[RMDB]
RNA sequence: GGGAACGACUCGAGUAGAGUCGAAAACGCGUCUUCGGACAAGGGAAGUUGCCUAAUCAUGCUCCCAAGAAAAACUUCUAAGCUUCAGGUAUAAGGUACCUGUACCGUAAACCGACACAGGUAGUCGGCUCUAUUAUUUCUUCGGAAAUAAUAGAGCAAAAGAAACAACAACAACAAC
Reactivity to 2A3 in 0.01 (KOAc 150mM, MgCl2 10mM, bicine 150mM(pH8.5), 24C), signal-to-noise 9, nucleotides 027 to 126: c050g010c030g020u010c010u050u030c110g080g010a040c060a090a070g090g000g010a040a040g040u080u080g060c020c040u120a110a080u110c050a050u110g040c020u020c000c010c030a010a020g090a030a080a020a020a010c040u060u040c030u100a110a060g020c060u080u060c030a010g020g040u040a120u040a180a060g160g010u020a030c000c000u010g030u050a050c010c030g090u090a050a030a100c030c010g070a010c020a010c010a060g110g020u070a030g040u040c020g020
Reactivity to DMS in 0.01 (KOAc 150mM, MgCl2 10mM, bicine 150mM(pH8.5), 24C), signal-to-noise 6, nucleotides 027 to 126: c100g000c180g020u000c000u000u010c110g020g010a040c020a090a200g000g000g010a040a070g000u010u000g000c040c030u010a080a090u020c100a080u010g000c060u000c010c010c020a100a100g000a070a050a040a080a040c050u000u000c020u000a100a100g000c110u000u000c030a040g010g010u010a050u030a110a100g010g010u000a000c010c000u000g010u010a050c040c020g000u020a050a060a140c080c000g010a060c050a040c070a040g010g010u010a050g000u000c030g000